[RMDB]
RNA sequence: GGGAACGACUCGAGUAGAGUCGAAAAAUUGUCGGAUUGGCCAUACGUGAUCGUGAUGACAAAGACAUCCGUCGUGAGAGAGUACUUAUCAGAAGACAUGCUGAUAGAUGUGAUUAAAGACUCCACGCAAUAGUGCAUAGUUCGCUAUGCACUAUUGAAAAGAAACAACAACAACAAC
Reactivity to 2A3 in 0.01 (KOAc 150mM, MgCl2 10mM, bicine 150mM(pH8.5), 24C), signal-to-noise 9, nucleotides 027 to 126: a000u060u030g030u010c010g020g020a020u030u050g040g020c030c020a040u070a140c170g060u080g060a140u090c020g030u050g030a040u040g000a020c000a020a070a010g100a020c030a070u020c020c020g060u050c030g000u040g010a250g000a010g000a010g130u040a050c010u050u030a020u020c010a000g040a110a010g210a110c060a110u260g050c010u030g010a010u020a020g120a110u120g050u070g040a120u100u190a090a060a010g010a020c000u000c000c000a010c010g000
Reactivity to DMS in 0.01 (KOAc 150mM, MgCl2 10mM, bicine 150mM(pH8.5), 24C), signal-to-noise 9, nucleotides 027 to 126: a100u000u010g010u000c010g010g010a170u000u010g020g010c040c020a060u000a060c120g020u000g020a070u000c040g020u000g010a260u010g000a040c040a040a070a100g000a110c150a060u000c020c020g020u010c020g010u000g000a140g010a050g010a140g000u000a050c050u010u000a020u000c010a020g000a070a090g010a150c300a070u010g010c010u000g000a020u000a020g010a090u000g010u000g010a120u000u010a070a080a120g000a100c010u000c010c010a030c050g000